[RMDB]
RNA sequence: GGGAACGACUCGAGUAGAGUCGAAAAUCGGCCCCCUCCCUAACACGGGAGUCUCGGGCCCCCUCCCAGGAAUGGAGACGGGGGGAAAUCGACCGGGUCCCGCAGAACCCGAUGGAGUCCCCCGCCACGAGGCAACCGUUCGCGGUUGCCAAAAGAAACAACAACAACAAC
Reactivity to DMS in 0.01 (KOAc 150mM, MgCl2 10mM, bicine 150mM(pH8.5), 24C), signal-to-noise 2, nucleotides 027 to 129: u170c100g000g030c000c000c040c160c030u010c010c000c000u030a220a100c200a110c290g010g090g000a040g030u050c050u030c280g090g000g050c020c000c000c010c030u020c000c000c000a150g000g020a140a070u040g000g010a120g010a140c000g000g000g000g000g000g000a000a000a090u010c020g000a000c030c000g020g040g000u000c060c030c180g080c220a170g010a220a030c000c040c030g030a120u050g000g000a090g070u000c060c000c000c000c050g000c000c020a090c060g060a220
Reactivity to 2A3 in 0.01 (KOAc 150mM, MgCl2 10mM, bicine 150mM(pH8.5), 24C), signal-to-noise 2, nucleotides 027 to 129: u080c000g000g000c000c000c000c000c000u000c000c010c010u110a150a020c110a020c090g000g060g000a010g050u000c030u070c050g000g000g000c000c000c000c000c000u000c050c000c000a090g030g090a110a170u170g050g010a140g040a030c110g000g000g000g000g010g020a050a110a050u020c000g040a000c020c000g020g010g000u020c000c080c060g010c020a030g020a110a060c030c000c000g000a000u050g070g000a060g000u000c020c010c000c010c010g000c000c060a090c040g070a090